Structure probing data (DMS and 2A3) for a 177-nucleotide construct.
The data come from the RNA Mapping Database (RMDB), library TTRDEL.
Conditions: 150 mM KOAc, 10 mM MgCl2 and 150 mM bicine (pH 8.5), 24 C.
RNA sequence: GGGAACGACUCGAGUAGAGUCGAAAAGAUAUGGAGUUUGACAGGACAUGGCGAUCGGAAACGAUCGUCCAACAGCCUGCGAACUCCUAAGUCAAAACGAGUGUACGACUUCGGUCGUACACUCGAAGGUAUUCGUACGGUUCGCCGUACGAAUACCAAAAGAAACAACAACAACAAC
Reactivity to DMS in 0.01 (KOAc 150mM, MgCl2 10mM, bicine 150mM(pH8.5), 24C), signal-to-noise 2, nucleotides 027 to 126: g020a020u000a300u000g000g010a000g010u010u000u020g000a100c010a020g000g010a110c060a260u000g000g000c000g010a010u000c010g020g000a060a090a120c000g010a000u000c000g000u020c000c050a010a070c240a120g000c000c000u000g010c010g020a000a000c000u000c010c000u000a010a100g000u000c030a040a080a060a140c010g010a010g020u000g000u010a000c010g030a010c000u000u030c180g030g000u000c000g000u000a000c000a000c000u000c010g010a030a080
Reactivity to 2A3 in 0.01 (KOAc 150mM, MgCl2 10mM, bicine 150mM(pH8.5), 24C), signal-to-noise 1, nucleotides 027 to 126: g010a010u060a000u090g000g020a010g020u000u010u020g170a210c010a020g000g030a090c060a130u130g000g000c000g000a000u010c000g050g000a020a020a000c000g010a010u010c000g030u000c000c000a030a010c000a040g160c000c000u000g010c000g010a000a000c000u000c000c000u000a000a000g020u000c040a030a010a060a140c020g020a000g010u010g000u030a010c000g020a010c000u140u080c300g060g000u000c000g000u000a000c000a000c000u000c000g010a000a000